Structure probing data (DMS and 2A3) for a 177-nucleotide construct. Reactivities are rounded to 0.1 and cut off at 0 and 3.
RNA sequence: GGGAACGACUCGAGUAGAGUCGAAAAGAUAUGGACGUAGUGCUGAUGACCAAACAUGUAAGUCGGAAACGAUUGAGUGUUUGCAAGGCAAACUACGUCCUAAGUCAAAGCCCCGUUCGCGGGGCAAGUUCUAAUUGGUCUUCGGACCAAUUAGAACAAAAGAAACAACAACAACAAC
Reactivity to DMS in 0.01 (KOAc 150mM, MgCl2 10mM, bicine 150mM(pH8.5), 24C), signal-to-noise 3, nucleotides 027 to 126: g010a030u000a300u010g000g010a010c000g000u000a020g020u000g010c040u010g000a050u000g010a180c300c000a000a000a000c010a030u000g020u010a240a100g010u000c010g010g000a100a050a160c000g010a010u010u000g000a170g020u000g000u020u000u010g000c050a120a120g000g000c020a040a100a080c010u020a020c010g000u000c000c000u000a000a030g010u000c030a080a160a170g000c000c000c000c010g010u000u000c190g020c000g000g000g010g010c010a020a010
Reactivity to 2A3 in 0.01 (KOAc 150mM, MgCl2 10mM, bicine 150mM(pH8.5), 24C), signal-to-noise 2, nucleotides 027 to 126: g030a030u060a030u120g000g000a010c000g010u020a000g020u010g020c010u030g000a300u060g000a080c050c000a000a010a020c000a020u050g090u300a010a050g020u020c010g000g060a070a110a030c020g010a020u020u130g080a130g030u010g000u000u000u000g030c050a110a220g000g000c040a260a260a050c010u000a000c000g000u000c000c000u000a030a000g000u000c010a000a180a000g010c040c000c000c000g030u050u050c260g040c010g110g000g000g030c010a010a000